[RMDB]
This 170-nucleotide RNA was probed chemically with DMS and 2A3. Reactivities are rounded to 0.1 and cut off at 0 and 3. For DMS, 19,862 sequencing reads were counted. It was measured as part of the RMDB library 15KLIB. The reactions ran in a buffer of 150 mM KOAc, 10 mM MgCl2 and 150 mM bicine (pH 8.5), at 24 C. For 2A3, 27,558 sequencing reads were counted. Values cover nucleotides 27 to 129.
RNA sequence: GGGAACGACUCGAGUAGAGUCGAAAACGUCUCGCUGUAUAAUGUCACACGCGAUAAGUUGGAAAAACUUAUCUCUACUGCUCGUGAUGGCGUAAGGCGAGGCGAUAACUUCCAUAGUGUCUUAACAGCGCAAGUUCCUUCGGGAACUUGAAAAGAAACAACAACAACAAC
Reactivity to DMS in 0.01 (KOAc 150mM, MgCl2 10mM, bicine 150mM(pH8.5), 24C), signal-to-noise 3, nucleotides 027 to 129: c000g050u030c030u020c020g040c010u020g040u090a070u070a140a080u010g000u020c020a070c010a030c010g030c110g010a000u010a000a020g020u000u000g060g060a000a060a040a030a000c010u030u010a040u000c000u010c090u060a140c260u060g040c100u030c000g000u030g000a100u000g030g000c000g050u010a010a080g030g030c010g000a020g030g020c020g000a030u040a070a040c180u030u040c030c010a140u080a080g020u050g030u000c000u040u060a110a070c120a080g060c140g030
Reactivity to 2A3 in 0.01 (KOAc 150mM, MgCl2 10mM, bicine 150mM(pH8.5), 24C), signal-to-noise 9, nucleotides 027 to 129: c000g000u000c000u000c000g000c010u010g070u050a180u050a190a100u080g010u010c000a000c000a000c000g030c000g010a000u000a020a000g010u020u050g150g050a170a100a060a030a000c010u020u010a010u000c020u000c030u160a200c110u160g130c060u020c050g030u030g070a300u000g050g000c020g000u020a040a030g000g000c000g000a010g000g000c000g000a000u000a020a050c040u070u040c010c000a030u070a060g130u090g030u020c020u080u080a070a040c040a030g050c030g000